An RNA of 207 nucleotides, treated with DMS and 2A3 and read out base by base. The DMS profile rests on 3,056 reads. It was measured as part of the RMDB library M2RFPK. For 2A3, 568 sequencing reads were counted. For 2A3 the reverse transcriptase was SuperScript II with manganese.

RNA sequence: GGGAACGACUCGAGUAGAGUCGAAAAGCUUCCUCUUGGCGCGGAGGUUUAACUGCGCUCGCUCCCCAUAUCGGUGUGGGCGCACCGGAUUUACAAAUUAAAGCCCUUUAGGGAGCGGAAAGGGACAAAAACUUGCACGUGUUCGCACGUGCAAGAAGUAGAUAACACACUUCGGUGUGUUAUCUACAAAAGAAACAACAACAACAAC
Reactivity to DMS in 0.01 (KOAc 150mM, MgCl2 10mM, bicine 150mM(pH8.5), 24C), signal-to-noise 2, nucleotides 027 to 156: g030c030u000u000c010c010u000c020u000u000g000g000c000g090c040g010g010a140g030g020u000u000u000a070a120c040u000g020c030g040c010u020c010g010c000u000c000c000c010c080a210u010a170u000c010g010g020u010g010u000g000g040g080c020g000c020a030c000c030g010g020a300u010u000u000a110c090a040a060a060u000u000a010a090a130g010c000c010c060u010u000u000a060g010g010g000a030g020c020g030g000a030a040a060g000g060g000a120c050a150a080a040a110a160c010u000u000g000c000a000c030g030u000g010u000u000c250g040c050a020c000g000u000g030c000a010a000g010a000a120
Reactivity to 2A3 in 0.01 (KOAc 150mM, MgCl2 10mM, bicine 150mM(pH8.5), 24C), signal-to-noise 1, nucleotides 027 to 156: g070c010u110u020c000c000u000c000u000u030g000g050c010g040c000g010g040a030g010g070u090u110u080a010a030c010u010g040c010g010c000u000c000g010c010u040c050c030c000c000a090u170a070u190c030g000g000u020g000u010g020g020g010c020g000c060a010c000c000g020g000a000u180u300u000a190c250a090a020a050u140u200a020a170a000g000c000c000c080u000u000u000a030g000g000g000a010g020c010g000g010a030a020a020g060g000g040a030c120a060a200a000a010a140c020u010u010g000c020a000c000g000u020g010u050u060c050g000c150a000c000g000u020g080c010a010a000g020a000a000